The record gives the reactivity of an RNA of 177 nucleotides to 2A3 and DMS. DMS adducts were read by reverse transcription with MarathonRT. The data come from the RNA Mapping Database (RMDB), libraries RFM100 and RFMREP. Conditions: 150 mM KOAc, 10 mM MgCl2 and 150 mM bicine (pH 8.5), 24 C. Values are in units of 0.01, from 0 to 300, in steps of 10.
[RMDB]
RNA sequence: GGGAACGACUCGAGUAGAGUCGAAAAAGGGCAGAACGCGCAGUCCGUGCAGACCACGGCAGAGUCGCAUUUGCGUUGCUCGAGGCGCAACCGAUACCGCCAAAGAGCCCGCCGCCCGAAGGCGCCCGCGUGGAAAUUAAUUCGUUAAUUUCCACGCAAAAGAAACAACAACAACAAC
Reactivity to 2A3 in 0.01 (KOAc 150mM, MgCl2 10mM, bicine 150mM(pH8.5), 24C), signal-to-noise 6, nucleotides 027 to 126: a010g030g000g000c030a030g030a200a050c070g010c010g000c020a010g050u060c010c010g000u010g000c070a060g030a190c070c010a010c000g010g000c030a040g030a040g240u270c010g000c010a030u050u070u100g020c020g020u050u170g000c000u000c000g010a040g000g000c000g010c040a040a030c010c020g040a050u130a130c040c030g010c010c010a070a200a020g010a010g000c030c030c000g010c010c010g000c000c000c000g020a040a050g100g010c070g010c000c000c000
Reactivity to DMS in 0.01 (KOAc 150mM, MgCl2 10mM, bicine 150mM(pH8.5), 24C), signal-to-noise 4, nucleotides 027 to 126: a110g000g010g010c010a180g020a080a050c110g020c000g010c020a150g010u030c010c030g000u010g000c220a240g000a210c250c000a010c030g000g000c010a140g000a100g010u050c020g020c010a100u020u010u010g030c010g010u020u060g010c000u000c010g000a300g000g010c000g010c110a100a070c130c160g010a140u020a090c300c000g000c000c010a010a090a130g000a030g000c000c300c020g000c020c170g000c010c030c000g000a110a120g010g000c100g000c010c020c020